[RMDB]
RNA sequence: GGGAACGACUCGAGUAGAGUCGAAAAGAAGUCUUCGGCUUGAGAGCGAUACGCGCUCCGUUGUGGUCAUAAUUAUUCGCGUUACCCACGACCGUGUAACUUCCCGGCUCGAGACGAAUCUGGUCGCUCUGUGUCGAGGUUUCGACCUUGACGCGGGAAAAGAAACAACAACAACAAC
Reactivity to 2A3 in 0.01 (KOAc 150mM, MgCl2 10mM, bicine 150mM(pH8.5), 24C), signal-to-noise 9, nucleotides 027 to 126: g080a050a000g040u020c040u060u060c070g030g010c040u130u140g080a060g010a020g130c030g060a060u080a180c110g020c010g010c070u000c030c030g040u060u090g050u080g030g010u030c050a030u040a150a070u140u160a100u110u150c080g010c030g080u020u040a050c000c000c010a010c010g010a020c000c020g010u020g010u030a070a070c010u030u020c000c000c000g010g000c020u030c030g040a040g010a030c030g010a020a050u040c050u060g040g020u030c010g010c030
Reactivity to DMS in 0.01 (KOAc 150mM, MgCl2 10mM, bicine 150mM(pH8.5), 24C), signal-to-noise 9, nucleotides 027 to 126: g010a070a070g010u010c050u010u010c050g000g000c050u010u010g000a110g000a040g010c040g010a150u030a070c140g010c060g010c110u010c020c070g010u010u000g020u010g000g000u000c150a130u020a040a060u020u020a090u020u020c110g010c100g000u000u000a050c090c010c010a050c050g010a030c060c030g010u010g010u010a050a070c080u000u010c010c030c030g000g010c020u000c050g000a090g010a070c030g010a080a070u010c050u010g010g010u000c030g010c090
An RNA of 177 nucleotides, treated with 2A3 and DMS and read out base by base. For 2A3 the reverse transcriptase was SuperScript II with manganese. Conditions: 150 mM KOAc, 10 mM MgCl2 and 150 mM bicine (pH 8.5), 24 C. The DMS profile rests on 141,036 reads. Source: RMDB library OK1LIB, as collected in RNAgym.